Source: RMDB library TTRINS, as collected in RNAgym.
The record gives the reactivity of an RNA of 177 nucleotides to DMS.

RNA sequence: GGGAACGACUCGAGUAGAGUCGAAAAGAUAUGGAAUGAGACUAUCCCUGGCACGUUGAAAUGUUACCCACAAUCGGAAACGAUUGUGGGUAACAUGGAGUGCCCUGGAUUCUCUCAUUCCUAAGUCCUUGUUCAUGUAGUUCGCUACAUGAACAAGAAAAGAAACAACAACAACAAC
Reactivity to DMS in 0.01 (KOAc 150mM, MgCl2 10mM, bicine 150mM(pH8.5), 24C), signal-to-noise 1, nucleotides 027 to 126: g000a100u010a300u010g020g000a030a010u010g000a030g030a020c080u010a010u000c000c000c030u000g000g020c010a000c010g000u000u010g010a170a170a010u000g000u000u000a000c000c000c000a000c000a020a010u000c000g000g010a100a120a270c000g010a020u000u010g050u010g000g000g020u000a010a000c000a000u000g000g000a060g010u000g000c000c000c050u000g010g000a030u000u000c080u000c010u000c000a000u000u000c000c000u000a020a100g000u000c040

The DMS profile rests on 2,871 reads.